[RMDB]
RNA sequence: GGGAACGACUCGAGUAGAGUCGAAAACGUCGCGACUUCAAUCUUGUUCACCUUUUUGGGGUGCAUGGAGUGCUGGUCGAUUGCGUUGACCAGGACCUCGUCAAAUAUCUUCACCAAGCCAGGUGCAACAGAAAGCUGACAAAUGCUGAAGUGGUCCGACAAAUCCCAGAUUCGUCUGGGAUUUGUCAAAAGAAACAACAACAACAAC
Reactivity to DMS in 0.01 (KOAc 150mM, MgCl2 10mM, bicine 150mM(pH8.5), 24C), signal-to-noise 1, nucleotides 027 to 156: c060g050u010c100g030c050g050a060c020u000u000c010a030a150u010c030u020u020g010u000u010c020a050c010c000u000u000u010u000u000g020g030g060g010u000g020c080a060u000g020g020a040g020u010g020c020u000g010g000u000c010g010a080u000u010g010c210g060u000u000g000a060c010c030a050g010g000a000c010c000u000c000g030u000c070a060a120a160u000a090u000c080u000u000c050a070c040c000a050a110g020c100c080a110g010g020u010g010c030a060a050c030a090g000a110a050a040g000c010u010g000a090c080a070a070a130u010g000c020u000g000a050a240g000u010g000g030u000c070c120
Reactivity to 2A3 in 0.01 (KOAc 150mM, MgCl2 10mM, bicine 150mM(pH8.5), 24C), signal-to-noise 3, nucleotides 027 to 156: c060g060u070c030g010c040g100a050c000u040u030c080a060a070u030c060u050u070g010u060u040c010a040c020c000u020u070u020u150u150g080g020g000g000u060g030c050a050u080g090g020a050g010u090g050c020u010g000g030u010c010g030a100u060u250g040c140g070u080u120g000a010c000c000a000g000g030a030c020c010u010c020g080u070c050a070a080a070u150a110u060c100u120u060c020a040c040c000a030a000g110c010c030a000g020g000u000g030c030a020a010c000a010g070a060a070a000g010c030u040g030a040c030a020a100a030u150g000c020u040g000a050a000g020u020g020g020u000c040c040